[RMDB]
RNA sequence: GGGAACGACUCGAGUAGAGUCGAAAAAAUGCCCUGAAACUCUCAGGGCUAUAAGAAGAAACGUGGACUGCUGGCUCUAGCAGGCCCAGCCCCUGGGAGGAAGCUCAAGGCUUCCUGCCUCUUCUUGUAGAAGUAAACCUUUCGAGGUUUACUUCUAAAAAGAAACAACAACAACAAC
Reactivity to 2A3 in 0.01 (KOAc 150mM, MgCl2 10mM, bicine 150mM(pH8.5), 24C), signal-to-noise 3, nucleotides 027 to 126: a000a020u130g000c010c000c000u040g010a300a230a050c130u150c010u000c100a010g020g000g000c010u000a000u000a000a000g030a000a010g010a050a080a000c100g080u160g010g020a000c020u020g010c020u030g030g180c020u040c030u120a030g000c030a010g030g020c000c000c000a010g010c020c000c000c030u000g000g010g030a010g000g000a000a000g000c020u100c220a200a110g190g000c000u010u000c010c000u010g080c000c010u030c000u000u010c000u000u030g050
Reactivity to DMS in 0.01 (KOAc 150mM, MgCl2 10mM, bicine 150mM(pH8.5), 24C), signal-to-noise 4, nucleotides 027 to 126: a090a050u000g010c010c000c010u010g000a030a120a150c240u010c120u000c010a010g010g010g010c000u000a000u000a010a030g010a050a030g000a040a080a090c250g010u010g020g000a100c010u000g010c030u000g010g000c160u020c090u010a090g010c050a080g000g010c050c010c010a090g000c040c020c000c070u000g010g010g000a020g010g000a020a010g010c000u000c200a150a120g020g010c010u000u000c000c000u000g010c000c010u000c030u000u000c000u000u000g030
Chemical mapping of a 177-nucleotide RNA with 2A3 and DMS. The reactions ran in a buffer of 150 mM KOAc, 10 mM MgCl2 and 150 mM bicine (pH 8.5), at 24 C. Reactivities are given for positions 27 through 126. For DMS, 4,485 sequencing reads were counted.